[RMDB]
RNA sequence: GGGAACGACUCGAGUAGAGUCGAAAAUGAGUCAUCAACAAGUCCUUUUCCAGUUAAGUGUAUAAUUUGAUAAUCAUGGAGAAGUGCCUCAAUAUUUUGACGAAUGAUAUUAUUAAGUUUUUUACUACUAUGACCUAAAGUUCGCUUUAGGUCAUAGAAAAGAAACAACAACAACAAC
Reactivity to DMS in 0.01 (KOAc 150mM, MgCl2 10mM, bicine 150mM(pH8.5), 24C), signal-to-noise 3, nucleotides 027 to 126: u000g000a300g000u000c040a030u000c080a080a110c180a110a090g000u000c070c000u000u030u000u000c000c000a060g020u000u000a010a080g010u020g010u010a060u010a110a040u020u000u000g010a050u000a080a070u000c110a140u010g000g000a050g020a010a020g000u000g020c040c030u010c090a080a060u000a100u000u000u000u000g010a060c040g000a110a030u000g000a100u010a080u010u000a090u000u000a090a070g000u010u000u020u010u010u000a070c090u000a170
Reactivity to 2A3 in 0.01 (KOAc 150mM, MgCl2 10mM, bicine 150mM(pH8.5), 24C), signal-to-noise 2, nucleotides 027 to 126: u070g030a010g000u000c010a020u000c000a020a110c050a090a050g030u040c000c000u010u010u010u000c000c030a010g000u010u050a120a010g020u070g090u080a160u070a300a170u120u050u120g050a050u060a080a070u090c090a070u010g000g010a020g030a050a000g000u010g060c000c000u020c010a070a040u030a130u100u080u000u030g030a010c000g000a000a050u060g020a010u030a070u300u140a070u110u160a120a070g010u150u000u000u000u000u040a020c010u010a000

About this RNA: Chemical mapping of a 177-nucleotide RNA with DMS and 2A3. It was measured as part of the RMDB library RFMREP.